[RMDB]
RNA sequence: GGGAACGACUCGAGUAGAGUCGAAAACUAAGCAAUGAAGAUGACACUUGAGAGAGGUUCCACUCUGCAGAGACAUCUUCACCGUCAGGUGGCGCGCUGGAUUACGAUCGCUGGGGGGUUGGGAUAGACGAAAAAUAUAGUUCGCUAUAUUUUUCGUAAAAGAAACAACAACAACAAC
Reactivity to DMS in 0.01 (KOAc 150mM, MgCl2 10mM, bicine 150mM(pH8.5), 24C), signal-to-noise 6, nucleotides 027 to 126: c070u000a080a110g010c100a110a090u000g010a040a020g000a020u000g010a190c230a070c020u000u000g020a150g000a030g010a050g000g010u010u010c190c160a190c030u000c000u010g010c060a170g000a060g000a100c010a010u000c010u000u000c010a060c100c050g010u010c070a070g010g010u000g010g020c050g020c080g020c050u010g000g010a100u000u010a070c090g000a070u000c050g020c040u000g020g010g000g010g010g010u000u000g000g000g010a150u010a090g000
Reactivity to 2A3 in 0.01 (KOAc 150mM, MgCl2 10mM, bicine 150mM(pH8.5), 24C), signal-to-noise 2, nucleotides 027 to 126: c060u090a100a040g040c030a070a150u080g000a040a020g010a000u020g030a030c020a030c160u030u050g010a030g000a010g010a010g160g020u280u000c030c020a050c000u000c010u060g050c030a020g010a030g080a160c000a020u000c000u010u010c000a000c010c000g120u080c040a050g030g040u020g050g000c030g010c000g010c030u010g000g000a080u080u110a060c060g040a050u050c040g000c060u040g000g020g000g030g000g010u050u090g000g000g020a040u020a030g120

Background: The record gives the reactivity of an RNA of 177 nucleotides to DMS and 2A3. The data come from the RNA Mapping Database (RMDB), library RFMREP. For 2A3, 2,339 sequencing reads were counted. 2A3 adducts were read by reverse transcription with SuperScript II with manganese. The reactions ran in a buffer of 150 mM KOAc, 10 mM MgCl2 and 150 mM bicine (pH 8.5), at 24 C.